The record gives the reactivity of an RNA of 177 nucleotides to DMS. Conditions: 150 mM KOAc, 10 mM MgCl2 and 150 mM bicine (pH 8.5), 24 C.
[RMDB]
RNA sequence: GGGAACGACUCGAGUAGAGUCGAAAAGGGUGACCAGCUUUGACUCCUGUAGUGAGGGGUAAACCCGACCGUGGCUUCCGGCACUAUUGCAGAAAGGUCACCUCAGGACCCAUCCGGGAAGCGUGAGUGAGGGACACAGAUUCGUCUGUGUCCCUCAAAAAGAAACAACAACAACAAC
Reactivity to DMS in 0.01 (KOAc 150mM, MgCl2 10mM, bicine 150mM(pH8.5), 24C), signal-to-noise 1, nucleotides 027 to 126: g000g030g020u000g000a070c080c000a150g000c140u010u000u000g010a170c000u010c030c000u000g070u000a030g030u010g000a040g030g020g010g000u010a040a140a080c000c000c010g010a080c240c100g030u000g000g010c050u000u000c020c020g030g020c010a020c110u040a040u000u000g020c160a230g000a040a100a050g010g000u000c000a010c010c000u000c080a060g010g000a130c000c020c000a060u000c050c020g000g000g000a050a000g000c000g000u000g000a160g010